[RMDB]
RNA sequence: GGGAACGACUCGAGUAGAGUCGAAAACUCUUAUGCCACGAAACGCCCAUACACACCGAAACUGCAGGAGACAUUCUUUAUUCCUUACUCGCUUAAGGAUGUGUUUCCCAUCCAUCACUUUCGCGGGGGUCACUAGGAGGUUCGCCUCCUAGUGACCAAAAGAAACAACAACAACAAC
Reactivity to 2A3 in 0.01 (KOAc 150mM, MgCl2 10mM, bicine 150mM(pH8.5), 24C), signal-to-noise 2, nucleotides 027 to 126: c040u050c000u030u040a070u160g010c000c000a060c040g010a000a130a000c020g000c000c000c010a010u060a010c030a000c010a020c090c100g070a130a090a010c010u090g020c040a030g000g010a020g030a050c030a030u100u020c040u010u150u120a110u000u070c000c000u030u050a040c030u000c020g020c020u000u070a000a000g000g020a000u010g050u000g000u070u030u000c040c000c000a010u060c010c000a040u040c000a000c070u000u040u060c010g030c000g020g030g000